[RMDB]
RNA sequence: GGGAACGACUCGAGUAGAGUCGAAAACAGUACGAUCCCACCCUGGGGUGGUUUCCUUGGUCGGCAAAAGACUCAUCAGCCUCGGUGAGCCCGUACUCGUACAGUGGUUAGGUGACUGCAGAAGUGCAUGGGCUAUAGUCUUCGGACUAUAGCCCAUAAAAGAAACAACAACAACAAC
Reactivity to DMS in 0.01 (KOAc 150mM, MgCl2 10mM, bicine 150mM(pH8.5), 24C), signal-to-noise 1, nucleotides 027 to 126: c140a170g030u000a020c080g010a060u010c000c000c000a050c010c070c040u040g030g000g000g030u000g000g050u030u070u020c020c030u020u000g000g040u000c030g000g000c150a030a060a050a070g000a130c060u020c000a010u000c060a140g000c040c050u000c110g000g020u000g000a020g010c040c010c010g020u050a030c050u000c040g030u000a170c020a060g000u010g000g000u030u000a020g040g030u000g020a110c030u010g000c040a030g010a040a090g010u000g000c090
Reactivity to 2A3 in 0.01 (KOAc 150mM, MgCl2 10mM, bicine 150mM(pH8.5), 24C), signal-to-noise 2, nucleotides 027 to 126: c010a010g090u150a030c010g010a070u130c000c040c000a000c010c080c100u240g000g080g070g000u040g010g000u020u100u000c010c030u070u110g000g030u130c040g000g040c030a010a060a070a000g110a120c000u060c120a050u050c000a040g040c000c020u010c010g050g000u070g030a000g000c000c000c000g020u040a000c000u000c050g020u060a060c000a020g120u090g060g060u050u030a010g080g130u020g040a050c000u040g000c000a020g010a300a020g030u030g040c050
Notes
An RNA of 177 nucleotides, treated with DMS and 2A3 and read out base by base. Source: RMDB library OK1LIB, as collected in RNAgym. Values cover nucleotides 27 to 126. The reactions ran in a buffer of 150 mM KOAc, 10 mM MgCl2 and 150 mM bicine (pH 8.5), at 24 C.